Structure probing data (DMS and 2A3) for a 207-nucleotide construct.
Conditions: 150 mM KOAc, 10 mM MgCl2 and 150 mM bicine (pH 8.5), 24 C.
RNA sequence: GGGAACGACUCGAGUAGAGUCGAAAAAUUCUUCAAGGAUGGUUGUACAAGCGGCUUCAGAUCGCUGUUGAUGACGAUUUUGGGCAAUUCUUUACCAACUAUAUCUGCAACCAGGUGAGACGCAUCAUUCGGACGUUCGAUUGGUAUGGAAUGAGGAGAGCUAUGUAUGUUUCGACAUACAUAGCUCAAAAGAAACAACAACAACAAC
Reactivity to DMS in 0.01 (KOAc 150mM, MgCl2 10mM, bicine 150mM(pH8.5), 24C), signal-to-noise 1, nucleotides 027 to 156: a140u010u000c020u010u010c130a100a060g010g010a110u000g000g000u000u000g000u000a040c110a120a120g000c050g010g000c020u000u000c020a030g000a070u000c020g020c020u010g000u010u020g050a120u000g000a110c030g030a060u000u000u000u000g010g010g060c050a070a070u000u000c070u000u000u000a080c050c010a010a040c120u000a160u010a030u010c040u000g020c040a050a180c050c010a110g030g050u000g010a150g000a120c170g000c030a080u000c040a270u010u000c050g030g010a020c020g060u010u000c050g000a100u000u010g040g000u000a050u000g000g000a030a050u020g010a120g010g010a260
Reactivity to 2A3 in 0.01 (KOAc 150mM, MgCl2 10mM, bicine 150mM(pH8.5), 24C), signal-to-noise 2, nucleotides 027 to 156: a020u080u060c020u110u080c020a040a020g060g000a060u040g070g000u040u030g020u090a060c070a230a000g010c030g090g000c060u100u080c080a050g000a210u010c060g010c120u000g000u080u080g070a120u100g040a030c050g010a000u050u000u060u160g060g020g000c020a020a040u150u070c020u060u080u040a060c010c000a010a020c040u060a030u020a070u290c010u000g000c030a000a080c040c020a000g000g000u030g000a010g020a000c050g060c060a070u030c030a000u030u230c060g030g020a060c050g110u100u080c060g050a170u050u020g000g000u010a030u070g070g010a020a030u020g040a060g070g050a120